This 177-nucleotide RNA was probed chemically with 2A3. The data come from the RNA Mapping Database (RMDB), library RFM100. The RNA was probed in 150 mM KOAc, 10 mM MgCl2 and 150 mM bicine (pH 8.5) at 24 C.
RNA sequence: GGGAACGACUCGAGUAGAGUCGAAAAAAUGAGAACAGAAAUCUCAUGUAGAACAAAAGGGUAAAAGCUCACUUGAUUUUGAUUUUCAGUAUGAAUACAAACCGUGAAAGCGUGGCCUAUCGAUCCUGGCAACUCUAGUCUUCGGACUAGAGUUGCCAAAAGAAACAACAACAACAAC
Reactivity to 2A3 in 0.01 (KOAc 150mM, MgCl2 10mM, bicine 150mM(pH8.5), 24C), signal-to-noise 1, nucleotides 027 to 126: a020a000u000g080a000g000a030a080c150a070g230a170a090a120u000c000u000c000a000u000g000u280a090g000a060a000c020a000a130a090a170g050g030g000u110a100a070a080a160g080c000u050c000a000c000u100u080g080a120u080u010u010u020g180a200u000u000u000u000c000a020g050u000a140u050g140a080a000u050a090c130a000a000a000c040c040g000u000g000a050a000a000g000c040g060u000g030g000c060c000u050a000u050c000g000a000u020c000c000u000